[RMDB]
RNA sequence: GGGAACGACUCGAGUAGAGUCGAAAAUUCGACUUCGGUCGAACGUUUUCCUAAGUCAAGCUAAGUAUAGGAGGUGUAGUAUAUCGGAAACGAUAUACGCAGAUACUACCCACCCUAUAUGAUGGCUUGAUAUGGACAGCUUUGCUUUCGAGCAAAAAAAUAUAUCAACAUUCGUGUUGAUAUAUUUAAAAGAAACAACAACAACAAC
Reactivity to 2A3 in 0.01 (KOAc 150mM, MgCl2 10mM, bicine 150mM(pH8.5), 24C), signal-to-noise 8, nucleotides 027 to 156: u020u000c000g000a000c000u040u050c300g110g000u000c000g000a010a020c030g010u050u030u050u060c020c000u060a240a030g020u000c000a000a000g000c010u050a070a030g010u000a010u000a000g010g010a030g000g020u030g000u030a060g010u000a020u000a000u010c010g030g020a110a060a040c020g010a000u010a000u000a030c000g000c000a020g050a090u120a080c060u080a030c030c010c010a150c030c010c000u000a010u010a000u050g070a080u300g020g000c000u000u000g000a000u000a020u020g040g010a050c040a090g050c090u060u070u080g010c010u090u100u160c210g110a040g010c080a020a020a030a010
Reactivity to DMS in 0.01 (KOAc 150mM, MgCl2 10mM, bicine 150mM(pH8.5), 24C), signal-to-noise 5, nucleotides 027 to 156: u000u000c010g010a020c000u000u000c300g050g040u000c000g010a010a030c030g010u000u000u000u000c010c010u010a090a270g010u000c010a010a020g020c010u000a140a300g010u000a010u000a020g020g000a170g010g030u010g020u000a110g020u000a010u000a020u010c000g000g000a170a120a230c020g020a060u000a020u000a030c040g010c150a130g020a200u000a050c070u000a050c020c020c020a140c080c000c000u000a020u000a010u000g020a190u000g010g010c010u000u000g010a010u000a120u000g000g020a100c110a120g000c070u000u000u000g000c020u000u000u010c100g010a120g050c060a000a000a020a140
The record gives the reactivity of an RNA of 207 nucleotides to 2A3 and DMS.
The RNA was probed in 150 mM KOAc, 10 mM MgCl2 and 150 mM bicine (pH 8.5) at 24 C.
For DMS, 13,964 sequencing reads were counted.
The data come from the RNA Mapping Database (RMDB), library RNAMAK.
For 2A3, 12,020 sequencing reads were counted.